[RMDB]
RNA sequence: GGGAACGACUCGAGUAGAGUCGAAAACGCAAGUCGAAGUAUAGGGUGUGACACGUGACCAAUGCCGAAAGAUUAAGGCAAGGGGUUAGCCGCAAGGCGAAGCUCUAAACCCAAGUCCCGGUGAAUGUAUAAGUAUUAGCUUCGGCUAAUACUUAUAAAAAGAAACAACAACAACAAC
Reactivity to DMS in 0.01 (KOAc 150mM, MgCl2 10mM, bicine 150mM(pH8.5), 24C), signal-to-noise 9, nucleotides 027 to 126: c070g010c100a080a080g010u010c040g010a100a100g000u010a080u020a100g010g010g020u010g010u010g000a050c070a090c070g010u010g010a120c040c030a070a080u010g000c010c010g010a070a090a100g010a070u010u010a150a160g000g010c030a050a240g000g000g000g000u000u000a290g000c010c010g000c290a060a100g000g010c010g000a090a140g000c010u000c000u000a030a190a140c040c000c030a050a110g000u000c010c050c010g000g000u000g010a100a060u030g010
Reactivity to 2A3 in 0.01 (KOAc 150mM, MgCl2 10mM, bicine 150mM(pH8.5), 24C), signal-to-noise 9, nucleotides 027 to 126: c050g020c070a070a020g040u040c020g110a080a020g050u080a070u140a170g090g030g020u090g030u040g050a010c010a010c070g040u020g040a030c000c020a060a120u070g010c000c000g080a110a090a020g110a050u130u100a060a020g020g000c010a020a060g020g010g000g010u220u020a010g000c000c010g010c060a040a020g000g000c000g000a010a000g000c000u000c000u020a090a100a050c000c000c010a010a020g030u020c030c020c010g000g030u070g050a150a130u160g010